Conditions: 150 mM KOAc, 10 mM MgCl2 and 150 mM bicine (pH 8.5), 24 C. The record gives the reactivity of an RNA of 207 nucleotides to DMS and 2A3. For DMS, 1,896 sequencing reads were counted.
RNA sequence: GGGAACGACUCGAGUAGAGUCGAAAAUCAUCAAGAAGUAGGCUUAGGCCAACUGCUUGGUGGUGAAAGUAGAGGGAAGGUAGCACUUCGACGCCUCUAAGUACGCUGUGGGAGUAGUGCUUAAAUCAAAAGCACAGCGACUUCGGUCGCUGUGCAAGAUGCCAUAUACCUUCGGGUAUAUGGCAUCAAAAGAAACAACAACAACAAC
Reactivity to DMS in 0.01 (KOAc 150mM, MgCl2 10mM, bicine 150mM(pH8.5), 24C), signal-to-noise 1, nucleotides 027 to 156: u000c010a030u000c000a050a040g000a020a000g020u010a070g050g030c000u000u020a140g030g070c000c010a110a070c020u000g010c030u000u040g010g040u000g000g000u010g000a080a090a180g020u000a050g000a090g030g030g000a090a070g000g050u010a100g010c050a100c070u000u000c030g030a060c030g000c010c030u010c030u000a060a160g050u000a030c090g030c000u010g020u020g010g000g030a200g050u010a050g010u000g000c050u000u000a030a100a120u000c090a030a090a110a200g010c000a020c010a010g000c010g020a000c000u000u010c300g010g030u000c000g080c000u000g020u010g010c040a000a050
Reactivity to 2A3 in 0.01 (KOAc 150mM, MgCl2 10mM, bicine 150mM(pH8.5), 24C), signal-to-noise 2, nucleotides 027 to 156: u020c000a000u000c000a010a010g020a010a000g030u090a070g010g000c020u100u090a060g100g060c020c010a020a010c010u030g010c010u010u000g000g020u000g000g020u010g030a090a040a000g080u140a000g010a030g020g030g000a050a000g030g010u060a010g030c050a010c060u060u050c080g030a020c040g090c010c000u040c020u040a050a030g040u020a010c040g000c100u050g000u080g090g040g000a070g010u090a010g000u030g000c000u030u140a040a090a030u150c080a130a080a000a000g010c000a000c000a000g000c000g010a000c000u020u050c170g070g000u010c000g000c000u000g010u000g000c000a000a000
The 2A3 profile rests on 1,778 reads.